[RMDB]
RNA sequence: GGGAACGACUCGAGUAGAGUCGAAAAUGUUCCUUAGUUCGGAUUGCAGGCUGCAACUCGCCUGCAUGAAGCCGGAAUCGCUAGUAAUCGCAGGUCAGCUAUACUGCGGUGAAUGUGUUCCUGAGCCUCCCACCUAACUGUUCGCAGUUAGGUGGGAAAAAGAAACAACAACAACAAC
Reactivity to 2A3 in 0.01 (KOAc 150mM, MgCl2 10mM, bicine 150mM(pH8.5), 24C), signal-to-noise 2, nucleotides 027 to 126: u060g000u010u000c000c010u040u090a090g050u060u100c040g000g010a040u000u000g000c010a000g000g000c000u090g000c120a060a020c040u040c230g000c000c000u000g020c000a000u010g000a000a020g050c030c000g000g070a000a030u280c040g000c120u010a000g010u010a030a000u000c000g000c000a000g030g070u110c110a100g060c050u100a110u120a240c000u000g000c000g000g000u000g020a000a000u010g010u000g010u020u000c030c000u090g020a010g020c000c040
Reactivity to DMS in 0.01 (KOAc 150mM, MgCl2 10mM, bicine 150mM(pH8.5), 24C), signal-to-noise 2, nucleotides 027 to 126: u030g010u000u000c040c020u000u020a100g010u010u010c040g000g010a100u000u000g060c000a010g000g000c010u000g010c260a120a110c220u010c100g000c000c000u010g000c000a010u020g000a230a130g000c010c020g000g010a040a000u000c020g030c020u020a060g000u000a040a010u000c020g000c020a020g000g010u010c110a170g020c180u020a030u050a050c000u010g010c000g000g020u010g000a110a140u020g000u000g020u000u000c000c010u000g000a110g000c090c090
Source: RMDB libraries RFM100 and RFMREP, as collected in RNAgym.
An RNA of 177 nucleotides, treated with 2A3 and DMS and read out base by base.
Reactivities are given for positions 27 through 126.
For DMS the reverse transcriptase was MarathonRT.
For 2A3, 905 sequencing reads were counted.